[RMDB]
RNA sequence: GGGAACGACUCGAGUAGAGUCGAAAAUCGAUCGUGUCGAAGCCGGGAUGCACGACGUCGCCGCACCGUGCCUUCGUGCGCUCGGCGAAGCGCCGCCACGCGGCCUCGAUGCGCGCCGGCGCGGCGAGGCGAUCAGCAGGUUCGCCUGCUGAUCGCCAAAAGAAACAACAACAACAAC
Reactivity to 2A3 in 0.01 (KOAc 150mM, MgCl2 10mM, bicine 150mM(pH8.5), 24C), signal-to-noise 2, nucleotides 027 to 126: u080c050g020a080u080c040g040u030g060u020c000g090a050a050g010c040c050g030g000g040a110u110g000c020a000c000g030a010c010g040u110c040g040c020c020g100c060a110c060c050g050u080g000c000c000u050u080c040g000u020g000c010g000c010u010c000g020g010c000g000a000a000g000c020g000c000c000g010c000c010a100c150g080c040g100g000c030c010u050c050g090a120u160g000c130g000c000g000c030c030g100g000c100g000c020g000g020c030g030a030
Reactivity to DMS in 0.01 (KOAc 150mM, MgCl2 10mM, bicine 150mM(pH8.5), 24C), signal-to-noise 2, nucleotides 027 to 126: u010c020g010a130u000c070g030u000g000u000c040g000a090a240g030c000c000g030g020g000a150u010g030c000a050c050g030a040c130g000u010c030g000c030c050g020c150a120c130c150g000u020g000c040c030u000u000c040g040u000g000c020g010c020u000c000g000g010c030g010a020a080g010c110g010c030c010g000c030c110a130c220g000c030g000g010c020c090u000c100g010a060u020g010c030g030c060g020c090c040g000g000c080g000c010g000g020c010g010a070